Structure probing data (DMS) for a 177-nucleotide construct.
Conditions: 150 mM KOAc, 10 mM MgCl2 and 150 mM bicine (pH 8.5), 24 C.
RNA sequence: GGGAACGACUCGAGUAGAGUCGAAAAGGCCUUUGUGUUGCCCAUUCACUUUCGGAAACUUGUGAAUGUGGUGUCAAAAAAGGCAUAAAUCAAAUUCUUUUGCAGCCAUUACUGCCCUUGAAUUUGGAACUACGGUCCUGUUCGCAGGACCGUAGUUAAAAGAAACAACAACAACAAC
Reactivity to DMS in 0.01 (KOAc 150mM, MgCl2 10mM, bicine 150mM(pH8.5), 24C), signal-to-noise 1, nucleotides 027 to 126: g000g070c000c000u000u000u010g020u000g000u040u040g040c000c000c000a000u000u000c000a000c000u000u000u030c300g020g030a150a100a300c020u060u010g000u030g020a040a000u000g000u070g030g050u020g040u060c000a000a000a020a000a000a010g000g030c000a060u000a010a100a210u070c000a020a020a000u000u000c000u000u010u000u000g000c000a070g030c070c060a160u060u010a240c000u000g050c030c080c070u010u000g040a040a040u000u000u020g000g000